[RMDB]
RNA sequence: GGGAACGACUCGAGUAGAGUCGAAAACAAAGCGCACAAUCCGUCCCCUCGCCCCUUUGGGGAGAGGGUUAGGGUGAGGGGAACAGCCAGCACUGGUGCGAACAUUAACCCUCACCCCAGCCCUCACCCAAUCGGCGUGAUUCGUCACGCCGAUUGGAAAAGAAACAACAACAACAAC
Reactivity to DMS in 0.01 (KOAc 150mM, MgCl2 10mM, bicine 150mM(pH8.5), 24C), signal-to-noise 1, nucleotides 027 to 126: c090a030a090a130g010c020g010c070a040c080a160a070u000c020c050g050u000c020c010c000c090u000c060g000c010c010c000c020u000u010u020g070g010g000g060a060g010a000g030g010g000u000u000a020g020g010g000u000g000a000g000g000g040g010a140a110c180a060g010c020c020a130g020c020a020c060u020g010g000u000g030c010g000a060a050c090a060u000u010a090a170c000c030c000u000c020a040c010c040c020c030a010g020c040c000c010u000c000a010c020